Source: RMDB library OK1LIB, as collected in RNAgym. An RNA of 177 nucleotides, treated with DMS and 2A3 and read out base by base. The reactions ran in a buffer of 150 mM KOAc, 10 mM MgCl2 and 150 mM bicine (pH 8.5), at 24 C.
[RMDB]
RNA sequence: GGGAACGACUCGAGUAGAGUCGAAAAAAUUCCACGGAAGCUGGGCAGAGGCUGCUCCAAAUGCUGCGCCUUGGAAAAUCAGAACCCUGGACCUUAGCAUUGGAAAAUAUUGUGGGCAUAAAGACUAUCUAACACUUGCCUUCGGGCAAGUGUUAGAAAAAGAAACAACAACAACAAC
Reactivity to DMS in 0.01 (KOAc 150mM, MgCl2 10mM, bicine 150mM(pH8.5), 24C), signal-to-noise 1, nucleotides 027 to 126: a020a060u030u000c000c000a090c090g030g080a110a050g000c040u000g010g040g020c080a070g030a140g000g000c010u030g070c080u050c030c000a040a010a080u010g000c040u030g000c300g020c020c020u000u000g000g020a000a070a060a110u000c110a030g030a130a100c030c010c000u030g000g000a080c070c020u000u000a000g020c010a130u000u030g030g000a030a060a020a060u010a140u020u010g000u010g060g000g000c130a030u000a070a030a070g000a100c100u070a060
Reactivity to 2A3 in 0.01 (KOAc 150mM, MgCl2 10mM, bicine 150mM(pH8.5), 24C), signal-to-noise 1, nucleotides 027 to 126: a010a010u140u030c070c010a050c040g000g000a070a020g040c090u100g010g010g000c080a020g060a110g090g000c010u000g040c090u050c020c000a000a150a000u210g000c060u080g030c080g020c020c070u070u050g020g000a000a120a000a070u140c010a050g090a300a090c000c010c000u000g030g070a080c000c000u070u120a080g000c000a050u040u070g000g060a040a060a010a000u150a050u100u260g050u160g000g000g000c010a000u080a130a030a000g050a000c000u080a030

For DMS the reverse transcriptase was MarathonRT.